[RMDB]
Record summary:
Structure probing data (DMS and 2A3) for a 177-nucleotide construct. For DMS, 15,020 sequencing reads were counted. For 2A3 the reverse transcriptase was SuperScript II with manganese. The data come from the RNA Mapping Database (RMDB), library M2PK90.
RNA sequence: GGGAACGACUCGAGUAGAGUCGAAAAUUAAUCGGGCUUGUUUGCGCCGCGUAUGCGCUUGCUUGCUUCCUUGCGGGCGAACGGGCUUGUUCCCUUUUGGCGCUUGCUUGCGGGCGGGCAAAAUGAAGAUAAUACCUGAUUUCGAUCAGGUAUUAUCAAAAGAAACAACAACAACAAC
Reactivity to DMS in 0.01 (KOAc 150mM, MgCl2 10mM, bicine 150mM(pH8.5), 24C), signal-to-noise 5, nucleotides 027 to 126: u010u010a100a120u000c020g000g000g010c010u000u000g010u000u000u000g000c020g020c010c010g020c020g010u010a050u010g020c300g010c080u000u000g010c110u010u000g000c040u000u000c100c080u000u010g020c010g000g000g000c010g000a010a010c040g000g000g000c010u000u000g010u000u000c000c000c000u000u000u000u000g010g000c120g000c010u000u000g010c020u000u000g020c070g010g010g010c010g010g000g020c020a030a040a050a070u010g000a120a110
Reactivity to 2A3 in 0.01 (KOAc 150mM, MgCl2 10mM, bicine 150mM(pH8.5), 24C), signal-to-noise 4, nucleotides 027 to 126: u150u100a040a090u060c020g000g020g000c010u020u030g020u040u030u020g020c260g120c010c000g020c010g040u100a050u120g040c060g020c060u080u180g040c050u120u140g010c000u090u080c020c030u020u110g000c010g010g000g000c020g000a000a010c000g000g010g020c000u000u010g000u010u010c000c000c000u020u110u010u040g030g010c030g000c010u000u030g010c010u030u070g020c150g050g020g000c020g000g000g050c000a020a020a030a090u160g030a060a070